[RMDB]
RNA sequence: GGGAACGACUCGAGUAGAGUCGAAAAACCUUUUUUGUGUCACAUAUGCAAAAUACUGGCAAUACAGUGGUAAAAAAGGCAGACAAAGCUUUGGCCCUUAUGGAAUUUGGUAAGGUAAGGAAGACAGACCAAAGAACAAGUAAUAACAAUUGAAAUACUCACAUAGUUCGUUCGCGAACUAUGUGAGAAAAGAAACAACAACAACAAC
Reactivity to 2A3 in 0.01 (KOAc 150mM, MgCl2 10mM, bicine 150mM(pH8.5), 24C), signal-to-noise 1, nucleotides 027 to 156: a000c030c000u050u000u000u000u000u000g110u060g110u060c060a010c000a050u120a000u050g080c000a000a220a040a180u300a200c110u020g050g010c000a020a050u040a060c070a140g000u020g060g000u140a100a100a000a000a000a000g010g010c080a000g000a110c080a110a000a020g040c000u040u000u000g050g110c090c000c030u030u030a050u080g050g120a280a210u230u010u060g080g060u020a070a070g040g030u080a010a000g000g020a000a060g010a000c040a030g030a060c000c000a020a000a000g080a030a000c030a020a000g050u160a060a090u050a230a000c050a000a000u130u020g110a170a070a010u130a050